Record summary: This 177-nucleotide RNA was probed chemically with 2A3 and DMS. DMS adducts were read by reverse transcription with MarathonRT. Values cover nucleotides 27 to 126. The RNA was probed in 150 mM KOAc, 10 mM MgCl2 and 150 mM bicine (pH 8.5) at 24 C.
RNA sequence: GGGAACGACUCGAGUAGAGUCGAAAAAAUGAGGUACAAGAUGCCUUGCCAAAUUUUGAAUUAAUGCGUCUUGAUCAAAUGGAUCAACAAAGUAAAAUGAAAAUGGUUGCAAAGCAUUUGAUUAGUCCCCAUGCCUUGUUUUCGAACAAGGCAUGGGAAAAGAAACAACAACAACAAC
Reactivity to 2A3 in 0.01 (KOAc 150mM, MgCl2 10mM, bicine 150mM(pH8.5), 24C), signal-to-noise 4, nucleotides 027 to 126: a000a000u260g010a050g000g020u070a050c070a130a050g040a080u000g000c000c000u030u000g020c000c010a040a140a070u190u140u070u080g140a100a090u070u140a140a090u170g010c020g030u000c080u060u020g010a010u000c000a050a040a160u090g070g000a050u090c000a000a000c040a030a180a010g070u110a080a150a090a120u120g100a060a010a070a120u100g170g000u050u110g000c050a020a000a000g010c010a010u010u010u000g070a040u040u020a030g070u080c000
Reactivity to DMS in 0.01 (KOAc 150mM, MgCl2 10mM, bicine 150mM(pH8.5), 24C), signal-to-noise 1, nucleotides 027 to 126: a000a050u050g000a060g010g030u000a010c120a040a030g080a030u000g000c000c090u000u020g070c040c030a090a100a030u000u000u000u000g000a170a020u010u030a040a080u000g000c300g010u050c050u000u010g000a000u000c000a090a070a040u000g010g000a090u010c020a010a010c020a000a070a080g020u060a000a040a080a030u000g000a090a000a000a060u000g020g030u000u030g020c010a020a000a060g000c020a020u000u000u000g000a070u000u000a140g000u070c000